[RMDB]
RNA sequence: GGGAACGACUCGAGUAGAGUCGAAAAGAAAGAAAGAAAGAAGAGUGAUAUUAUGUAUUUGAUAGUCCUUCUUAGCCAUCUUUAGCUCCCGGUUUUUAAGGACUAUCCACGCAUACUUAAAAUGUAAACCGUCCAAAGCUUUCGAGCUUUGGACGGUAAAAGAAACAACAACAACAAC
Reactivity to 2A3 in 0.01 (KOAc 150mM, MgCl2 10mM, bicine 150mM(pH8.5), 24C), signal-to-noise 1, nucleotides 027 to 126: g000a060a000a000g140a000a060a000g130a000a010a010g300a010a010g060a000g000u300g020a180u190a000u170u000a080u070g010u000a020u000u230u300g000a000u000a000g000u000c000c000u000u000c000u050u100a000g000c000c000a030u040c250u000u300u060a000g050c000u130c060c080c070g020g000u000u000u000u000u060a000a000g000g000a000c000u000a000u010c000c000a020c000g000c020a000u060a040c000u160u150a000a070a030a000u190g060u300a040a130